[RMDB]
RNA sequence: GGGAACGACUCGAGUAGAGUCGAAAAGAAAGAAAGAAGCAUCAUGCAUUAUUUCAGGCAGUAUACUGGUAAAGGGUUUUUGCACCAUUCUUACCAGUUGCCACCUGAAAUUAAUGUAAGAUGUGAAUUGUCUUUGCUCAUUCGUGAGCAAAGACAAAAAAGAAACAACAACAACAAC
Reactivity to DMS in 0.01 (KOAc 150mM, MgCl2 10mM, bicine 150mM(pH8.5), 24C), signal-to-noise 2, nucleotides 027 to 126: g010a070a080a220g000a100a040a130g000a300a300g000c000a000u010c040a080u000g000c000a000u000u000a000u000u000u010c000a030g020g000c000a230g000u000a000u060a000c010u000g000g000u000a000a020a050g000g000g000u000u000u000u010u000g050c200a020c050c060a080u030u000c090u010u000a000c020c000a000g000u000u000g000c010c050a160c020c020u000g000a000a000a030u000u010a000a010u000g010u000a090a030g010a030u000g030u010g010a100a200
Reactivity to 2A3 in 0.01 (KOAc 150mM, MgCl2 10mM, bicine 150mM(pH8.5), 24C), signal-to-noise 3, nucleotides 027 to 126: g120a000a060a000g120a010a110a010g030a140a010g000c000a000u000c000a010u110g000c020a000u020u000a000u000u000u000c000a000g010g000c000a000g000u020a050u030a140c010u000g000g000u010a030a060a070g110g030g010u030u070u080u200u270g100c080a010c000c000a010u160u000c000u100u000a000c000c000a000g000u000u010g000c000c000a000c000c000u000g010a000a000a000u160u130a000a000u030g000u000a000a060g000a010u000g000u000g010a000a050
Chemical mapping of a 177-nucleotide RNA with DMS and 2A3. Source: RMDB libraries RFM100 and RFMREP, as collected in RNAgym. The 2A3 profile rests on 1,697 reads. Conditions: 150 mM KOAc, 10 mM MgCl2 and 150 mM bicine (pH 8.5), 24 C. For 2A3 the reverse transcriptase was SuperScript II with manganese. For DMS the reverse transcriptase was MarathonRT.